RNA sequence: GGGAACGACUCGAGUAGAGUCGAAAAGAUAUGGAGACGUGUGGGAGCGACUCGGAAACGAGAAUCGCGAAGAACACAGUGUCUCCUAAGUCAAACGUUUGUCUACGGUUCGCCGUAGACAAACGAAGAUGCCAGUCUAGUUCGCUAGACUGGCAUCAAAAGAAACAACAACAACAAC
Reactivity to DMS in 0.01 (KOAc 150mM, MgCl2 10mM, bicine 150mM(pH8.5), 24C), signal-to-noise 1, nucleotides 027 to 126: g010a060u010a300u010g000g000a010g020a020c000g010u000g000u010g000g000g000a150g040c000g010a010c000u010c000g000g000a090a040a210c010g000a020g000a060a170u000c000g030c000g000a120a090g000a130a080c010a000c010a020g000u050g010u000c010u000c010c000u010a000a060g030u000c010a050a060a270c000g000u000u000u000g000u000c000u010a010c000g000g010u000u010c260g060c000c010g000u000a000g000a010c000a000a000a000c000g000a040a070